RNA sequence: GGGAACGACUCGAGUAGAGUCGAAAACUCAGCGGCAAAAUCAGCAAUAGCGUUAACAGGAUCAGCAGUGGCCAGCGGAUAUACCGCAACUGCCUAACCAUCAUCAGCAGCAAUACCGCACUGAAAAACGAGUCUUUAGGUUCGCCUAAAGACUCGUAAAAGAAACAACAACAACAAC
Reactivity to 2A3 in 0.01 (KOAc 150mM, MgCl2 10mM, bicine 150mM(pH8.5), 24C), signal-to-noise 1, nucleotides 027 to 126: c010u010c020a010g050c010g040g030c010a010a000a020a180u070c030a140g000c010a010a160u070a120g050c020g030u080u050a060a030c020a070g030g010a040u070c010a010g000c040a020g040u010g070g060c070c020a020g000c030g040g010a050u160a030u110a270c010c000g020c030a040a020c010u030g000c010c010u020a020a030c020c000a000u080c000a000u010c040a020g010c010a000g000c010a020a060u100a120c040c010g070c060a000c070u070g050a100a000a020a020
Reactivity to DMS in 0.01 (KOAc 150mM, MgCl2 10mM, bicine 150mM(pH8.5), 24C), signal-to-noise 1, nucleotides 027 to 126: c020u000c020a150g000c040g000g020c070a010a020a060a150u010c020a160g010c040a010a040u000a100g000c120g070u000u000a050a140c140a060g000g000a040u000c230a060g000c040a020g030u060g010g030c080c070a070g050c000g000g010a110u000a070u000a130c060c000g050c010a090a050c110u000g000c020c090u010a110a100c050c000a070u000c060a080u020c020a060g000c110a040g000c030a080a030u000a100c110c000g010c080a100c120u000g010a060a020a040a080